[RMDB]
RNA sequence: GGGAACGACUCGAGUAGAGUCGAAAACUCAGGUGACUCUGAGCAUCUCAUGGCUACCUCCUCCCCACCUGCAGCCUCAUCUCCACCCUGCCGCACUCUAUGACUGAGCAGCACAGGGCGCCAGGGGAGACUGUGGUACGUUCGCGUACCACAGUCUAAAAGAAACAACAACAACAAC
Reactivity to DMS in 0.01 (KOAc 150mM, MgCl2 10mM, bicine 150mM(pH8.5), 24C), signal-to-noise 1, nucleotides 027 to 126: c000u000c030a040g010g000u000g030a120c300u050c030u000g000a060g050c070a080u000c020u000c000a120u020g010g000c060u010a180c060c030u010c040c010u000c020c000c010c010a160c120c010u000g010c080a060g000c040c040u000c050a090u020c040u010c030c090a150c000c020c000u000g000c130c080g020c040a030c010u000c020u010a050u000g000a090c100u000g010a060g020c110a080g000c000a070c060a030g020g000g040c000g010c060c030a060g000g000g000g020
This 177-nucleotide RNA was probed chemically with DMS.